[RMDB]
RNA sequence: GGGAACGACUCGAGUAGAGUCGAAAACCAGGGAUUUUCGUCCUCGAGUUUCUUGAUGGUUCUCCUGCUCUUCCGGAGCUUUCUUUCGAGGUCUUCCGCGUCUUUUCUUGCUUGGAUCCAUUUCUCGUCGGUAGCGUCUUCGGACGCUACAAAAGAAACAACAACAACAAC
Reactivity to DMS in 0.01 (KOAc 150mM, MgCl2 10mM, bicine 150mM(pH8.5), 24C), signal-to-noise 4, nucleotides 027 to 129: c050c040a080g000g000g000a070u020u000u030u010c080g010u000c020c030u010c000g000a110g030u000u020u050c060u050u020g040a130u040g030g010u010u040c070u020c040c060u030g020c040u010c060u050u050c120c060g020g000a100g000c000u030u030u000c060u010u020u000c040g010a040g020g030u000c040u040u020c040c030g050c070g030u020c030u040u050u010u020c040u000u000g030c000u030u030g000g000a080u030c050c030a100u050u030u020c000u000c060g000u080c150g010
Reactivity to 2A3 in 0.01 (KOAc 150mM, MgCl2 10mM, bicine 150mM(pH8.5), 24C), signal-to-noise 6, nucleotides 027 to 129: c000c000a030g070g040g020a020u040u050u030u040c040g030u020c020c000u010c010g010a020g010u030u040u020c070u060u130g080a120u130g050g010u030u020c010u020c000c010u050g020c020u020c010u140u080c060c050g020g000a000g010c000u010u070u000c010u010u070u050c040g020a050g010g070u000c010u060u010c020c020g040c020g060u020c030u050u080u070u000c040u060u060g020c000u010u030g010g000a030u020c030c010a090u040u040u030c030u010c010g160u040c050g060